[RMDB]
RNA sequence: GGGAACGACUCGAGUAGAGUCGAAAAGAGUGGUGGAGCCGACUGAAGUGCGGAUGCCGGCAUGAGUAACGAUAAAAGAAGUGAGAAUCUUCUUCGCCGUAAGGACAAGGGUUCCUGGGGAAGGGUCGUCCGCCCAGGGAAAGUCGGGACCUAAGGUACUUAGUUUUUUGUUCGCAAAAAACUAAGUAAAAGAAACAACAACAACAAC
Reactivity to DMS in 0.01 (KOAc 150mM, MgCl2 10mM, bicine 150mM(pH8.5), 24C), signal-to-noise 1, nucleotides 027 to 156: g000a210g000u000g010g010u020g010g020a200g010c040c020g000a080c050u010g010a140a160g060u000g000c020g020g010a110u010g010c040c030g010g030c040a160u000g000a140g050u000a070a060c050g030a150u010a090a020a010a030g020a020a010g020u000g020a210g020a220a230u010c020u000u000c010u000u000c070g000c060c020g000u010a050a110g000g000a100c130a090a110g020g020g000u000u000c010c010u000g010g000g030g020a110a090g010g030g070u010c040g040u010c000c020g060c020c010c040a140g000g000g000a030a010a110g010u010c010g000g000g000a130c030c010u000a010a070g000g030u000
Reactivity to 2A3 in 0.01 (KOAc 150mM, MgCl2 10mM, bicine 150mM(pH8.5), 24C), signal-to-noise 2, nucleotides 027 to 156: g030a000g010u110g010g010u060g020g050a030g060c000c000g000a000c020u040g050a170a060g080u060g050c010g020g010a020u050g010c010c010g030g010c040a060u090g010a010g030u110a050a040c050g040a070u110a120a180a000a000g000a000a000g000u020g020a010g010a060a050u010c000u000u020c000u020u020c030g000c040c020g000u060a030a010g010g010a020c080a050a100g050g000g010u050u030c000c010u010g010g000g040g020a060a100g020g040g000u090c030g030u000c000c010g010c030c030c000a040g060g020g030a060a080a000g010u000c000g000g000g030a020c010c000u050a070a000g060g000u010